[RMDB]
RNA sequence: GGGAACGACUCGAGUAGAGUCGAAAAUCUUGCACCUUCGGGUGCAAGAAAAUGAAAGCGCAUGCGAGCGCACAGCGCACGCUGAAAAACUGCGCAAAAGAAAAACUCAGCACUUCGGUGCUGAGAACUAACAUCCAGGGUUCGCCCUGGAUGUUAGAAAAGAAACAACAACAACAAC
Reactivity to DMS in 0.01 (KOAc 150mM, MgCl2 10mM, bicine 150mM(pH8.5), 24C), signal-to-noise 1, nucleotides 027 to 126: u000c000u010u000g000c000a000c000c000u010u010c170g020g010g010u000g020c000a020a000g000a030a040a040a090u000g010a120a120a160g000c010g010c010a030u000g010c030g000a040g020c030g040c000a110c130a100g020c000g030c040a020c020g000c020u000g000a020a080a040a110a120c280u000g000c000g000c010a060a020a020a090g000a090a060a030a140a220c010u000c000a000g000c000a000c010u000u020c170g000g010u010g010c000u000g000a030g010a040a130

An RNA of 177 nucleotides, treated with DMS and read out base by base. Values are in units of 0.01, from 0 to 300, in steps of 10. For DMS, 1,068 sequencing reads were counted. The data come from the RNA Mapping Database (RMDB), library M2PK50.